[RMDB]
RNA sequence: GGGAACGACUCGAGUAGAGUCGAAAACAGCGGCAGACGUGACCACUGUUAGCGGUCGCCGCUUCAACAAGUCCAAGACGCCGGACGCUAUCCGCCAGAAGUGGCAGACCCCGCGCUGGCUGUUCGACUGGGCUGUGAAGCGCUUCGGGCAGUUCGGCGGAGUGUAGGAAUUCGUUCCUACACUCCGAAAAGAAACAACAACAACAAC
Reactivity to DMS in 0.01 (KOAc 150mM, MgCl2 10mM, bicine 150mM(pH8.5), 24C), signal-to-noise 1, nucleotides 027 to 156: c050a090g060c000g040g050c030a110g000a130c080g000u000g020a110c000c000a010c000u000g000u000u000a070g010c000g000g010u000c020g000c050c010g040c010u000u000c010a080a110c070a070a100g030u020c020c020a080a200g040a140c010g000c020c020g080g010a070c030g050c080u000a090u010c020c010g000c000c010a110g000a210a100g010u000g030g020c010a050g000a040c020c010c040c080g000c040g030c040u000g010g000c020u000g010u000u000c040g020a110c080u000g010g040g070c020u000g000u000g000a090a100g030c040g050c040u000u000c020g010g010g010c020a080g000u000u010c050g020g000
Reactivity to 2A3 in 0.01 (KOAc 150mM, MgCl2 10mM, bicine 150mM(pH8.5), 24C), signal-to-noise 2, nucleotides 027 to 156: c060a030g020c000g040g000c100a120g110a190c070g110u080g040a120c010c020a120c120u120g030u140u080a070g050c050g050g070u040c030g030c050c020g050c000u000u010c000a030a090c010a050a040g010u000c010c000a020a040g060a010c040g050c070c010g000g050a070c020g000c020u100a110u060c030c060g000c030c030a070g010a240a030g240u070g060g000c020a040g040a160c040c020c020c040g050c040g010c050u000g000g000c040u040g010u060u040c000g040a040c110u010g000g020g030c000u000g030u040g010a000a000g030c060g060c000u050u020c000g030g010g030c020a040g040u130u140c010g020g000